[RMDB]
RNA sequence: GGGAACGACUCGAGUAGAGUCGAAAAGCUGACGUCGACAACGUCUUAGAAAGCCAACCUUCAAAGACAGCCGUGACGUCAACACCGUCUUUGAAGCCUGGUUUUCUAAGACGGUCGUGAUGUCAGCUUUCACUUUGGUCUUCGGACCAAAGUGAAAAAAAGAAACAACAACAACAAC
Reactivity to 2A3 in 0.01 (KOAc 150mM, MgCl2 10mM, bicine 150mM(pH8.5), 24C), signal-to-noise 8, nucleotides 027 to 126: g000c000u000g000a000c000g010u020c010g060a030c020a260a070c040g010u000c010u010u000a010g010a010a010a000g000c000c010a010a020c010c000u010u010c010a010a000a000g010a010c020a030g110c160c090g050u040g070a180c120g130u070c030a010a020c000a000c000c010g000u000c000u000u000u000g010a000a000g000c020c050u020g010g000u000u000u000u000c000u000a000a000g000a000c010g000g000u040c010g040u060g030a010u030g000u000c000a000g000c000
Reactivity to DMS in 0.01 (KOAc 150mM, MgCl2 10mM, bicine 150mM(pH8.5), 24C), signal-to-noise 6, nucleotides 027 to 126: g000c010u010g010a010c000g030u010c010g000a090c070a090a120c000g000u000c000u000u000a000g000a000a010a010g000c010c000a020a120c260c010u000u010c000a000a010a010g000a010c000a060g040c210c230g020u020g000a130c230g010u070c290a070a090c020a040c030c100g000u000c000u000u000u000g000a000a010g010c300c150u000g000g000u000u000u000u000c000u000a000a010g000a010c000g000g000u000c080g000u010g000a010u010g010u000c000a000g000c000

An RNA of 177 nucleotides, treated with 2A3 and DMS and read out base by base. It was measured as part of the RMDB libraries RFM100 and RFMREP. The RNA was probed in 150 mM KOAc, 10 mM MgCl2 and 150 mM bicine (pH 8.5) at 24 C.